[RMDB]
RNA sequence: GGGAACGACUCGAGUAGAGUCGAAAACUACAUUAGUAUGUCACUUGUAUUAGUCAUUGUAGUGAAGAGAUUGUACAACCCAUCACUUUCUAACUUUGCGUUAGCAUUGUGCAGUGGUGUAAUGUGGCUAAUGGGAAUAGUUCGCUAUUCCCAUUAGAAAAGAAACAACAACAACAAC
Reactivity to DMS in 0.01 (KOAc 150mM, MgCl2 10mM, bicine 150mM(pH8.5), 24C), signal-to-noise 9, nucleotides 027 to 126: c020u000a020c030a030u000u000a070g020u000a050u010g000u000c040a030c040u010u000g010u000a040u000u010a030g020u000c080a130u000u000g010u010a090g010u010g010a060a080g010a100g010a050u000u000g010u000a030c040a070a070c050c030c000a080u000c010a010c010u000u000u000c050u010a050a030c000u000u010u000g020c140g010u000u010a030g000c100a010u000u000g010u000g010c300a050g010u000g000g010u000g010u000a030a030u000g010u000g000g010
Reactivity to 2A3 in 0.01 (KOAc 150mM, MgCl2 10mM, bicine 150mM(pH8.5), 24C), signal-to-noise 9, nucleotides 027 to 126: c010u030a000c000a030u040u040a030g110u070a100u200g060u050c010a010c040u040u040g040u050a060u070u150a070g030u030c030a040u040u100g090u100a110g050u030g090a070a020g070a010g010a050u050u090g020u030a010c010a020a040c010c010c000a010u040c000a010c000u030u060u030c020u020a030a040c010u040u110u260g030c050g030u020u040a010g000c040a040u000u030g010u010g020c020a030g030u010g030g010u040g020u070a040a070u060g010u020g050g020
Chemical mapping of a 177-nucleotide RNA with DMS and 2A3. For DMS, 35,015 sequencing reads were counted. The 2A3 profile rests on 15,877 reads. 2A3 is a SHAPE reagent: it acylates the 2'-hydroxyl of flexible nucleotides of all four kinds. Conditions: 150 mM KOAc, 10 mM MgCl2 and 150 mM bicine (pH 8.5), 24 C.